[RMDB]
RNA sequence: GGGAACGACUCGAGUAGAGUCGAAAAUCGUCAACCUCGACCGAGAUGUUCGUCGUCCAGUGCUCACCGGAGGUGGCCUUGAUGUUGAUGAACUCCUCGACCUGGUGGUCCUUCCAGUGCAUCAUCGACAUGCGAGCCGACCGGCGAACACCCCCGGGAUACAGCUUUCAUUCGUGAAAGCUGUAUCAAAAGAAACAACAACAACAAC
Reactivity to DMS in 0.01 (KOAc 150mM, MgCl2 10mM, bicine 150mM(pH8.5), 24C), signal-to-noise 1, nucleotides 027 to 156: u000c030g010u000c030a110a170c000c050u000c050g000a090c050c010g030a150g020a090u000g000u010u020c010g030u000c030g000u000c070c050a120g010u000g020c060u000c020a040c000c050g040g030a170g000g010u020g010g000c020c060u000u010g000a060u020g000u000u000g000a050u010g010a020a110c080u000c030c020u000c070g010a050c010c020u040g000g000u000g030g000u000c020c050u010u010c010c040a110g050u000g000c080a110u000c020a080u010c010g000a130c040a070u000g040c050g020a150g020c010c020g000a100c050c000g020g040c000g000a060a030c010a050c000c020c020c000c000g050g010
Reactivity to 2A3 in 0.01 (KOAc 150mM, MgCl2 10mM, bicine 150mM(pH8.5), 24C), signal-to-noise 4, nucleotides 027 to 156: u090c020g030u020c020a040a100c010c050u080c060g070a050c040c040g050a040g010a130u050g010u000u020c020g010u000c000g010u000c070c080a100g020u120g190c020u070c030a100c000c110g080g010a070g000g040u100g030g010c030c030u040u120g040a020u050g020u020u010g010a030u030g020a060a090c070u080c040c040u080c030g080a130c020c010u050g080g020u050g060g080u080c020c030u080u020c030c010a050g010u050g120c010a050u010c000a030u020c060g050a030c020a060u070g050c030g020a000g010c000c010g040a080c020c010g010g010c010g010a020a000c000a020c010c030c000c040c000g000g040
Notes: The record gives the reactivity of an RNA of 207 nucleotides to DMS and 2A3. The data come from the RNA Mapping Database (RMDB), library OK3TST. 2A3 adducts were read by reverse transcription with SuperScript II with manganese. For DMS the reverse transcriptase was MarathonRT. The reactions ran in a buffer of 150 mM KOAc, 10 mM MgCl2 and 150 mM bicine (pH 8.5), at 24 C. For 2A3, 3,112 sequencing reads were counted. High DMS reactivity at an A or C suggests that its Watson-Crick edge is free.